[RMDB]
RNA sequence: GGGAACGACUCGAGUAGAGUCGAAAAAAGUAUAAUAUCACUUAUUGAUCCAAUCUAUUGAUCAACGGAACAAGUUACCCUAGGGAUAACAGCGCAAUCCUAUUCUAGAGUUCAUAUCGACAAUAGGGUCCACCAGUGAGUUCGCUCACUGGUGGACAAAAGAAACAACAACAACAAC
Reactivity to 2A3 in 0.01 (KOAc 150mM, MgCl2 10mM, bicine 150mM(pH8.5), 24C), signal-to-noise 1, nucleotides 027 to 126: a000a000g240u200a170u170a300a110u130a020u040c000a000c060u040u090a040u070u220g000a000u000c000c040a070a000u000c000u130a070u090u150g020a100u000c000a060a060c030g000g000a110a170c090a150a000g000u240u220a130c030c040c020u290a070g010g010g010a180u000a090a000c000a040g050c000g060c110a000a000u000c000c000u000a090u200u110c040u000a040g070a070g000u240u000c130a130u290a130u070c100g000a040c000a020a020u010a000g170g000
The record gives the reactivity of an RNA of 177 nucleotides to 2A3. High 2A3 reactivity points to a flexible backbone, as in loops and unpaired stretches. Conditions: 150 mM KOAc, 10 mM MgCl2 and 150 mM bicine (pH 8.5), 24 C. It was measured as part of the RMDB library OK1LIB.